[RMDB]
RNA sequence: GGGAACGACUCGAGUAGAGUCGAAAAGGGCGCCGCGGGACGGCCCGCGCGAGCGGGAGGACGGCGGGGCGAUAGCAGGUCUGUGAUGCCCUCAGACGCCCUGGGCCGCACGCGCGCUACACUGGCGGAGUAACAACUAGUUCGCUAGUUGUUACUCAAAAGAAACAACAACAACAAC
Reactivity to DMS in 0.01 (KOAc 150mM, MgCl2 10mM, bicine 150mM(pH8.5), 24C), signal-to-noise 2, nucleotides 027 to 126: g000g000g000c010g010c160c070g060c050g000g000g030a190c140g040g030c010c000c010g000c030g000c190g000a150g030c020g000g000g000a050g020g000a200c020g010g020c010g020g000g000g030c000g010a060u010a130g010c140a040g010g000u000c050u000g010u010g000a200u010g000c130c000c020u020c040a120g010a180c010g010c000c000c010u010g000g020g020c020c020g000c030a150c020g000c000g000c020g030c020u000a060c070a100c070u000g010g010c150g000
Reactivity to 2A3 in 0.01 (KOAc 150mM, MgCl2 10mM, bicine 150mM(pH8.5), 24C), signal-to-noise 1, nucleotides 027 to 126: g060g000g020c000g000c110c100g050c030g060g030g010a070c060g120g060c000c020c040g000c000g000c000g020a030g000c000g000g040g000a020g040g000a030c010g000g000c000g000g000g000g000c010g040a080u140a060g120c130a020g030g060u050c010u050g150u110g060a080u170g010c040c000c000u020c010a100g020a170c010g020c000c020c010u020g010g150g000c020c010g020c010a020c020g020c000g000c000g000c000u060a050c040a040c090u190g050g020c060g110
Record summary
Chemical mapping of a 177-nucleotide RNA with DMS and 2A3. For DMS the reverse transcriptase was MarathonRT. Values cover nucleotides 27 to 126.